[RMDB]
RNA sequence: GGGAACGACUCGAGUAGAGUCGAAAAGGCUAUGACUCGUGUCCGUCGGCGUAGCCCACAACAUGCCCAGGUAGCCCAGACCUUCAAGGCUACGGUGCGUUGCGACGCACGGUCUGAUUCUUCACAAAGUAGUCCCGAGUCUUCGGACUCGGGACAAGUUAUGUAUUGAGUUCGCUCAAUACAUAACAAAAGAAACAACAACAACAAC
Reactivity to DMS in 0.01 (KOAc 150mM, MgCl2 10mM, bicine 150mM(pH8.5), 24C), signal-to-noise 2, nucleotides 027 to 156: g030g000c020u000a060u000g010a060c030u000c020g000u000g030u000c110c090g000u000c050g010g020c030g040u000a040g020c000c000c020a190c080a080a050c100a120u000g020c010c000c080a080g020g000u010a060g000c020c010c120a140g000a110c030c020u010u000c100a120a200g030g010c010u000a050c020g030g020u000g040c050g040u000u020g010c080g010a190c060g000c030a030c010g020g020u000c020u000g000a260u000u010c030u010u010c050a110c060a090a130a260g030u000a150g000u000c000c000c010g010a010g010u000c010u000u020c300g080g010a010c000u000c010g000g000g000a000c010a000a010
Reactivity to 2A3 in 0.01 (KOAc 150mM, MgCl2 10mM, bicine 150mM(pH8.5), 24C), signal-to-noise 2, nucleotides 027 to 156: g020g010c000u010a020u080g020a250c060u130c190g070u080g110u200c100c080g100u070c020g010g020c010g000u010a000g000c010c020c010a070c020a080a050c050a060u170g040c000c020c000a020g010g020u000a000g020c040c010c110a020g010a000c000c000u010u010c000a000a000g000g000c000u000a000c010g000g000u010g000c010g010u030u030g050c160g070a000c000g000c000a010c000g000g010u010c000u020g010a050u080u060c060u110u100c140a150c150a300a170a010g130u190a110g010u030c000c000c000g000a000g000u000c000u000u120c190g100g000a000c000u000c000g000g020g010a000c000a000a000
Structure probing data (DMS and 2A3) for a 207-nucleotide construct. The reactions ran in a buffer of 150 mM KOAc, 10 mM MgCl2 and 150 mM bicine (pH 8.5), at 24 C. The data come from the RNA Mapping Database (RMDB), library M2RFPK. Reactivities are given for positions 27 through 156. The DMS profile rests on 4,074 reads.